[RMDB]
RNA sequence: GGGAACGACUCGAGUAGAGUCGAAAAGGAGACUGCUGGACUCGCCGCCCAAGUUCGAGAGGGGCCAAAAUGCCGAACGAAGGGAACGCGGGGGAAGGAUCAUAUGACGAGAGGGGAUGAGCUGGUACAACUAGAUGCUUCGGCAUCUAGAAAAGAAACAACAACAACAAC
Reactivity to 2A3 in 0.01 (KOAc 150mM, MgCl2 10mM, bicine 150mM(pH8.5), 24C), signal-to-noise 6, nucleotides 027 to 129: g050g000a010g010a010c020u040g030c020u040g050g030a070c000u000c070g030c010c010g000c010c000c010a050a020g050u050u110c050g010a010g010a010g080g010g000g000c010c000a050a100a010a050u210g020c010c000g020a050a040c040g010a060a050g010g000g020a020a020c040g000c020g050g000g000g010g000a010a040g040g010a000u030c000a030u090a090u210g060a030c060g000a000g000a010g030g000g000g000a040u030g010a010g000c040u020g020g020u060a050c030a040a000
Reactivity to DMS in 0.01 (KOAc 150mM, MgCl2 10mM, bicine 150mM(pH8.5), 24C), signal-to-noise 8, nucleotides 027 to 129: g050g020a050g030a060c090u020g030c090u050g040g010a070c080u000c150g000c060c070g020c050c000c030a100a120g020u070u030c040g020a040g010a070g050g020g000g000c010c100a010a030a080a080u070g020c030c000g000a080a120c030g020a100a050g010g020g020a050a080c120g050c080g030g020g050g020g010a050a050g020g020a040u000c070a000u050a070u040g020a120c070g000a070g020a050g050g040g000g000a040u040g020a070g030c040u010g040g000u000a070c190a050a080